[RMDB]
RNA sequence: GGGAACGACUCGAGUAGAGUCGAAAAUCUCCCUUGUAAUUAGUGGGAGAAAUUCAUGUUUCCGAAGCAUAAAUUAAUUGAUGUAAUUACCAGUAUUAAACAGCACGGUGCUUUGUUUCCAGCACCGCUCGCUGAUGAGUUUCGACUCAUCAGCGAGAAAAGAAACAACAACAACAAC
Reactivity to 2A3 in 0.01 (KOAc 150mM, MgCl2 10mM, bicine 150mM(pH8.5), 24C), signal-to-noise 3, nucleotides 027 to 126: u000c000u000c000c000c030u040u120g200u130a280a300u100u170a100g220u230g010g010g000a010g000a000a000a000u010u090c070a060u120g010u000u010u000c010c020g060a070a020g040c080a070u120a260a110a100u150u130a080a100u150u190g060a050u160g120u210a040a040u060u150a130c080c000a000g080u020a040u140u090a120a090a030c040a010g120c100a000c050g000g000u010g000c000u020u040u200g020u020u020u040c000c000a000g010c000a010c000c000g000

An RNA of 177 nucleotides, treated with 2A3 and read out base by base. It was measured as part of the RMDB libraries RFM100 and RFMREP. The reactions ran in a buffer of 150 mM KOAc, 10 mM MgCl2 and 150 mM bicine (pH 8.5), at 24 C.